[RMDB]
RNA sequence: GGGAACGACUCGAGUAGAGUCGAAAAAUGUGGCUGCGAAUUGGUUUCCCCCGUUAUGAGGAAAAAAGAAUUGACGCAGCUGGAGUAACCGCACAGCCGCUGCGAACGCCGCUGUGAACGGCGUGCCCGUCGCACUAGUCUUCGGACUAGUGCGACGAAAAGAAACAACAACAACAAC
Reactivity to DMS in 0.01 (KOAc 150mM, MgCl2 10mM, bicine 150mM(pH8.5), 24C), signal-to-noise 1, nucleotides 027 to 126: a000u020g000u060g010g020c000u000g000c000g000a060a000u030u040g010g040u000u090u000c030c000c010c060c270g000u020u000a060u070g030a050g020g010a000a110a020a050a020a090g000a010a110u000u000g000a300c070g000c000a060g060c030u000g000g000a100g060u000a070a140c000c000g060c000a060c000a160g000c030c140g000c040u000g000c150g000a180a180c060g000c040c110g000c000u030g010u000g010a060a030c000g000g000c010g050u000g000c000c060
Reactivity to 2A3 in 0.01 (KOAc 150mM, MgCl2 10mM, bicine 150mM(pH8.5), 24C), signal-to-noise 2, nucleotides 027 to 126: a000u250g060u120g010g000c000u000g040c010g060a070a080u030u070g020g000u030u000u030c000c010c020c050c050g070u140u150a240u300g010a170g030g150a000a000a000a000a000a060g090a010a150u040u070g040a060c040g000c010a000g000c000u040g020g020a010g030u040a030a030c030c040g000c000a000c020a080g000c000c000g050c030u060g040c060g020a070a050c080g000c100c000g020c100u050g030u030g150a080a080c050g060g000c000g000u030g000c020c080